[RMDB]
RNA sequence: GGGAACGACUCGAGUAGAGUCGAAAAAUAGAUUCACGUGAAAUAAUUGAGCCUACAACUUUUGGAGUCAAUAUGCAAUAUCACGUAUAUAAUGAGAUGAUGCGAAUGCUAGUUGCGGCAGGGAAAACCGCUUUUAAUUAUUCGUAAUUAAAAGCGGAAAAGAAACAACAACAACAAC
Reactivity to 2A3 in 0.01 (KOAc 150mM, MgCl2 10mM, bicine 150mM(pH8.5), 24C), signal-to-noise 3, nucleotides 027 to 126: a000u100a000g100a030u050u120c060a020c030g010u050g040a020a110a070u150a030a060u080u020g020a010g010c000c040u080a080c080a180a100c100u190u170u180u210g020g000a020g090u050c010a020a010u060a050u190g070c030a060a030u040a040u160c010a000c010g030u000a000u010a000u010a130a160u070g080a040g020a030u110g010a030u050g010c030g050a090a010u050g000c020u050a020g070u050u040g020c020g020g000c030a000g030g000g040a020a070a000a030
Reactivity to DMS in 0.01 (KOAc 150mM, MgCl2 10mM, bicine 150mM(pH8.5), 24C), signal-to-noise 5, nucleotides 027 to 126: a080u010a100g000a120u010u000c120a050c040g020u000g000a040a140a050u000a090a040u000u000g010a080g010c060c020u000a070c150a050a100c230u020u010u010u000g000g000a090g020u000c020a040a030u000a080u010g020c100a040a070u010a070u010c020a010c040g020u000a110u010a070u000a080a070u010g000a100g000a060u000g000a070u010g000c050g010a040a080u000g010c040u000a060g020u000u010g010c140g000g010c030a030g010g010g000a060a040a090a120

Overview
The record gives the reactivity of an RNA of 177 nucleotides to 2A3 and DMS. The 2A3 profile rests on 2,260 reads. For DMS, 4,796 sequencing reads were counted. 2A3 adducts were read by reverse transcription with SuperScript II with manganese. It was measured as part of the RMDB library OK2TST.